Chemical mapping of a 177-nucleotide RNA with DMS and 2A3. Conditions: 150 mM KOAc, 10 mM MgCl2 and 150 mM bicine (pH 8.5), 24 C. For 2A3 the reverse transcriptase was SuperScript II with manganese. The DMS profile rests on 16,451 reads. The 2A3 profile rests on 20,532 reads. Reactivities are given for positions 27 through 126.

RNA sequence: GGGAACGACUCGAGUAGAGUCGAAAAUUGACUCAGUGCCUUAACGGAUGGUGGAGAGCAGCAGACUGUAGCAUAAUCCUCCCAGAAGAAAUGGGAAAUAAAGUCUUAUCCAAGAUGCACUGAGCCAUCUCACAAAAUAGUUCGCUAUUUUGUGAGAAAAAGAAACAACAACAACAAC
Reactivity to DMS in 0.01 (KOAc 150mM, MgCl2 10mM, bicine 150mM(pH8.5), 24C), signal-to-noise 7, nucleotides 027 to 126: u030u020g000a100c000u020c000a010g020u000g000c000c040u000u010a090a200c270g010g010a020u010g000g020u020g000g000a060g000a100g000c120a190g010c120a060g010a060c050u020g020u020a110g010c120a110u020a100a110u010c100c080u000c010c000c010a040g010a130a150g020a080a120a090u010g000g010g010a040a050a070u030a060a070a050g000u010c020u010u010a070u000c020c000a060a300g000a040u000g030c000a010c000u000g000a020g000c020c030a050
Reactivity to 2A3 in 0.01 (KOAc 150mM, MgCl2 10mM, bicine 150mM(pH8.5), 24C), signal-to-noise 9, nucleotides 027 to 126: u070u080g020a020c000u000c000a000g000u000g000c010c010u050u040a110a030c090g010g000a020u030g030g100u090g020g060a100g010a030g070c060a010g020c020a010g060a210c050u110g080u250a020g070c050a080u100a160a060u120c010c010u040c000c010c010a060g040a280a020g050a060a210a090u050g010g020g060a040a070a020u240a030a110a020g040u010c010u050u100a020u000c000c000a020a030g030a050u060g000c000a000c000u000g000a000g000c000c000a040